[RMDB]
RNA sequence: GGGAACGACUCGAGUAGAGUCGAAAAUUUGGUCCGCUUGCAGAAAUGACGUAGAGGACGUGUUCAUUGAGUAUCGUCUUCAGUCUCAGUCUACUCGCUUGCUCCGUUGCUGAUUUCGAUUGAUCGUGAGCUGUCCUUUCAGCUAUUUUAGAGGGUGCCUUUGCGAUGAUUUCGAUCAUCGCAAAGGAAAAGAAACAACAACAACAAC
Reactivity to 2A3 in 0.01 (KOAc 150mM, MgCl2 10mM, bicine 150mM(pH8.5), 24C), signal-to-noise 1, nucleotides 027 to 156: u040u000u190g040g000u040c000c080g120c050u050u080g060c050a000g060a200a200a130u090g030a060c060g080u140a020g000a010g040g010a010c080g050u050g020u050u070c140a210u060u300g000a000g170u080a100u070c000g020u050c000u000u030c010a000g070u010c050u060c040a020g000u060c010u020a020c040u010c050g080c000u000u000g020c000u060c030c050g070u070u040g080c040u060g040a070u040u070u110c050g010a020u040u040g090a060u090c070g100u010g040a000g000c070u080g070u160c000c000u000u110u020c070a100g020c040u060a080u120u200u090u010a110g050a020g040g040g020u270g000
Conditions: 150 mM KOAc, 10 mM MgCl2 and 150 mM bicine (pH 8.5), 24 C. Chemical mapping of a 207-nucleotide RNA with 2A3. 2A3 adducts were read by reverse transcription with SuperScript II with manganese.